Structure probing data (DMS and 2A3) for a 177-nucleotide construct. It was measured as part of the RMDB library OK2TRN. Values cover nucleotides 27 to 126.
[RMDB]
RNA sequence: GGGAACGACUCGAGUAGAGUCGAAAAUCAUGGAUCCAUGCGUACGCUAGCAUGGCUAGUGGUACGAUCCGAUCGGUACCACUAGGUACGAUCAGUAGUAUGACUCAGUACACUACGCUAGCUACUGCAGUAGUAUGAAAUUCGUUUCAUACUACUGAAAAGAAACAACAACAACAAC
Reactivity to DMS in 0.01 (KOAc 150mM, MgCl2 10mM, bicine 150mM(pH8.5), 24C), signal-to-noise 9, nucleotides 027 to 126: u010c100a100u010g010g010a120u010c040c040a100u010g010c090g010u000a030c210g010c020u000a020g010c000a100u000g010g010c020u000a000g010u000g010g010u000a010c000g000a050u000c160c140g010a060u000c030g010g020u000a000c000c000a050c070u000a020g010g020u000a010c020g000a080u000c020a030g010u000a170g010u010a130u000g000a030c150u000c060a090g030u000a040c050a250c110u010a070c120g000c010u000a030g000c010u000a020c030u010g030
Reactivity to 2A3 in 0.01 (KOAc 150mM, MgCl2 10mM, bicine 150mM(pH8.5), 24C), signal-to-noise 9, nucleotides 027 to 126: u120c040a060u100g120g040a080u040c040c020a050u100g040c050g030u030a030c130g000c050u020a010g000c010a040u080g060g000c010u000a000g000u000g020g000u010a010c010g010a030u050c110c100g080a230u030c030g090g040u020a000c000c010a010c040u020a040g040g000u010a010c020g010a040u030c010a010g060u120a010g040u040a070u130g030a040c030u010c080a030g020u040a040c050a020c070u110a030c110g000c010u010a010g000c000u020a020c020u100g020